[RMDB]
RNA sequence: GGGAACGACUCGAGUAGAGUCGAAAAUCUACUAUGAUCUUCUCUCUUCACCCCGUCGAGUGUGACGAGGAGUGUUCUGAAGUAGAGGCUUCAGAUUUAGAAGAAGGUGAAUCAGAGUGCAUUUCUGCGAAAUGGAAUUGUUCGCAAUUCCAUUUCGAAAAGAAACAACAACAACAAC
Reactivity to DMS in 0.01 (KOAc 150mM, MgCl2 10mM, bicine 150mM(pH8.5), 24C), signal-to-noise 1, nucleotides 027 to 126: u010c060u010a050c000u000a040u010g000a010u000c010u010u000c010u000c070u000c000u000u010c010a300c010c000c010c000g000u010c000g000a170g030u010g010u010g010a010c030g010a020g000g010a140g020u010g020u000u000c010u000g010a030a030g000u020a120g010a180g010g010c020u010u010c000a010g000a020u000u000u020a090g010a030a010g000a030a020g000g000u010g010a080a040u000c030a050g010a060g010u010g000c170a140u010u000u000c050u000g000
Reactivity to 2A3 in 0.01 (KOAc 150mM, MgCl2 10mM, bicine 150mM(pH8.5), 24C), signal-to-noise 2, nucleotides 027 to 126: u010c000u040a030c020u020a070u070g010a010u000c020u050u020c010u020c000u020c000u000u040c010a010c000c000c000c000g010u010c020g000a120g190u270g040u180g090a000c010g010a160g040g020a100g050u040g050u040u000c010u000g000a020a020g000u060a130g050a080g300g000c000u010u010c010a020g000a020u020u030u200a020g000a040a000g000a010a010g000g020u050g040a020a030u020c020a000g010a000g050u030g020c030a070u010u020u040c020u050g040
The record gives the reactivity of an RNA of 177 nucleotides to DMS and 2A3. 2A3 adducts were read by reverse transcription with SuperScript II with manganese. The reactions ran in a buffer of 150 mM KOAc, 10 mM MgCl2 and 150 mM bicine (pH 8.5), at 24 C. For DMS the reverse transcriptase was MarathonRT. Values cover nucleotides 27 to 126.